[RMDB]
An RNA of 177 nucleotides, treated with 2A3 and DMS and read out base by base. For DMS, 733 sequencing reads were counted. The 2A3 profile rests on 684 reads. 2A3 adducts were read by reverse transcription with SuperScript II with manganese. For DMS the reverse transcriptase was MarathonRT. Values are in units of 0.01, from 0 to 300, in steps of 10. Source: RMDB library RFMREP, as collected in RNAgym.
RNA sequence: GGGAACGACUCGAGUAGAGUCGAAAACACUAUGAGCUGCCAAUGAUGUAUCACCACCAUAUCUCAUUAUUCUCCAGUAAAUGUGAUAAUAAUGUCAUCUGUUAACAUAAAAAAAGUUUGACUUCACGAGAAUACAUGGGUUCGCCCAUGUAUUCUCAAAAGAAACAACAACAACAAC
Reactivity to 2A3 in 0.01 (KOAc 150mM, MgCl2 10mM, bicine 150mM(pH8.5), 24C), signal-to-noise 1, nucleotides 027 to 126: c010a020c040u060a070u140g060a000g000c030u020g010c070c000a080a050u100g040a000u080g030u060a090u050c020a040c120c010a000c000c000a000u080a020u190c050u010c010a010u000u020a000u110u020c020u000c010c050a000g050u200a170a170a110u070g020u050g050a000u020a050a060u140a020a030u100g020u030c000a040u020c060u000g020u040u110a100a010c060a100u300a140a200a000a000a000a000a040g020u070u030u050g030a020c030u000u000c120a050c070
Reactivity to DMS in 0.01 (KOAc 150mM, MgCl2 10mM, bicine 150mM(pH8.5), 24C), signal-to-noise 1, nucleotides 027 to 126: c050a130c080u020a020u020g030a000g000c010u000g060c000c030a070a020u000g020a080u010g000u000a080u000c060a050c040c080a150c030c040a060u010a030u000c020u020c020a080u010u000a140u000u000c030u000c020c080a090g010u000a090a100a110u010g010u000g020a030u000a030a060u000a030a070u010g030u000c030a020u010c090u010g040u000u000a030a050c120a080u070a010a000a050a080a140a050a070g000u000u000u000g010a040c080u000u000c160a050c140